Annotation:
Chemical mapping of a 177-nucleotide RNA with DMS and 2A3. 2A3 adducts were read by reverse transcription with SuperScript II with manganese. DMS adducts were read by reverse transcription with MarathonRT. The RNA was probed in 150 mM KOAc, 10 mM MgCl2 and 150 mM bicine (pH 8.5) at 24 C. The 2A3 profile rests on 1,386 reads.

RNA sequence: GGGAACGACUCGAGUAGAGUCGAAAAGGGGCGAUGCGGAAACGGCAGGAAUGCGCAUUCCGGAAACGACAGCAGCAGAGCCCGCUAUACGUGAAGGAUUGGCUGAAGCGUAUUGAAAUACUGAGCCUAUUCCAAAGUGCUUCGGCACUUUGGAAUAAAAAGAAACAACAACAACAAC
Reactivity to DMS in 0.01 (KOAc 150mM, MgCl2 10mM, bicine 150mM(pH8.5), 24C), signal-to-noise 3, nucleotides 027 to 126: g000g000g000g000c030g030a120u000g000c000g020g000a050a020a010c000g000g000c300a240g000g010a010a020u000g010c230g000c120a130u000u000c000c000g040g030a020a040a020c030g000a030c160a280g030c090a070g000c080a030g020a300g020c000c000c000g000c040u000a020u010a020c020g010u040g000a260a140g000g000a300u020u030g000g000c030u000g010a260a220g000c030g000u010a020u000u020g000a030a040a110u010a050c110u000g010a150g020c050c010
Reactivity to 2A3 in 0.01 (KOAc 150mM, MgCl2 10mM, bicine 150mM(pH8.5), 24C), signal-to-noise 2, nucleotides 027 to 126: g050g000g010g000c010g010a030u060g000c000g010g000a000a100a000c000g030g000c060a020g030g020a000a060u080g050c150g040c200a000u020u000c000c000g000g000a060a030a000c010g040a030c040a110g030c030a010g030c070a010g010a020g030c000c000c010g000c000u000a000u000a000c010g020u040g050a030a010g220g040a210u260u260g040g040c030u020g010a100a020g000c000g010u010a010u000u030g030a010a060a030u200a040c070u070g030a000g040c020c020